The record gives the reactivity of an RNA of 177 nucleotides to DMS and 2A3. DMS adducts were read by reverse transcription with MarathonRT. The reactions ran in a buffer of 150 mM KOAc, 10 mM MgCl2 and 150 mM bicine (pH 8.5), at 24 C.
[RMDB]
RNA sequence: GGGAACGACUCGAGUAGAGUCGAAAAGGGUGUCGAUCUGCUCCAAGACACCUAACGAUCCUCGGAGCAGAUCUGCUGUCGGGUUUUUACCUUAGGCUCUUUUGAGCGACGGCAGUAGGAUCGGAAAGGGUUGGUGGUAGUUCGCUACCACUGACCCAAAAGAAACAACAACAACAAC
Reactivity to DMS in 0.01 (KOAc 150mM, MgCl2 10mM, bicine 150mM(pH8.5), 24C), signal-to-noise 8, nucleotides 027 to 126: g010g000g020u010g000u010c050g000a050u010c020u000g000c010u000c000c010a160a120g000a050c030a020c030c020u020a030a060c110g010a040u000c010c010u000c160g010g000a020g010c010a030g000a030u020c000u010g000c000u000g000u010c010g000g010g010u000u030u030u030u050a030c010c010u000u040a100g010g020c000u000c000u010u030u040u040g010a010g020c000g000a090c010g000g010c000a050g000u010a050g000g000a060u000c010g000g010a100a110a100
Reactivity to 2A3 in 0.01 (KOAc 150mM, MgCl2 10mM, bicine 150mM(pH8.5), 24C), signal-to-noise 9, nucleotides 027 to 126: g070g000g000u010g020u020c020g020a050u010c020u030g000c000u010c000c010a030a010g020a010c010a010c000c010u020a110a040c070g040a040u020c000c030u070c110g010g000a000g000c010a000g000a010u000c010u020g000c000u000g010u010c020g030g030g030u040u050u030u160u270a080c020c000u090u180a150g090g000c000u010c000u030u300u170u300g010a000g000c010g030a040c030g010g000c010a000g000u020a040g000g020a030u050c050g020g040a100a110a120